[RMDB]
RNA sequence: GGGAACGACUCGAGUAGAGUCGAAAAGCAUCUAACUUGUGAUGUCAGCUCAUUUUGAAUAGGGAUGUUACAUGUCACGAGACUGUUGUAAUCAUCUUGGUUCUCAUGUCUCAAGGUAAUUAGCAGGCUAUUAGCAAUAAUUCGUUAUUGCUAAUAGAAAAGAAACAACAACAACAAC
Reactivity to 2A3 in 0.01 (KOAc 150mM, MgCl2 10mM, bicine 150mM(pH8.5), 24C), signal-to-noise 9, nucleotides 027 to 126: g030c020a040u030c020u090a030a140c040u060u060g030u040g050a020u020g050u060c040a030g020c020u020c080a140u060u110u110u210g140a130a090u090a130g020g010g020a010u020g010u040u030a030c020a030u090g030u050c030a020c160g090a100g020a080c030u040g120u170u030g070u120a020a020u080c020a000u010c000u040u060g040g010u050u000c050u010c040a060u190g040u010c010u000c030a020a010g030g000u050a080a070u060u050a040g040c030a010g080g000
Reactivity to DMS in 0.01 (KOAc 150mM, MgCl2 10mM, bicine 150mM(pH8.5), 24C), signal-to-noise 9, nucleotides 027 to 126: g010c080a080u010c040u000a080a130c080u000u000g010u000g000a030u000g010u010c070a110g010c110u010c030a060u000u010u010u000g010a090a100u020a110g000g000g000a020u000g010u000u000a060c120a040u000g010u000c050a070c160g000a070g010a100c050u000g000u000u010g010u000a020a030u010c030a020u010c060u000u000g010g010u000u000c020u010c120a060u020g000u000c020u000c010a060a060g000g010u010a040a050u000u000a050g010c060a060g000g010

The record gives the reactivity of an RNA of 177 nucleotides to 2A3 and DMS. It was measured as part of the RMDB libraries RFM100 and RFMREP.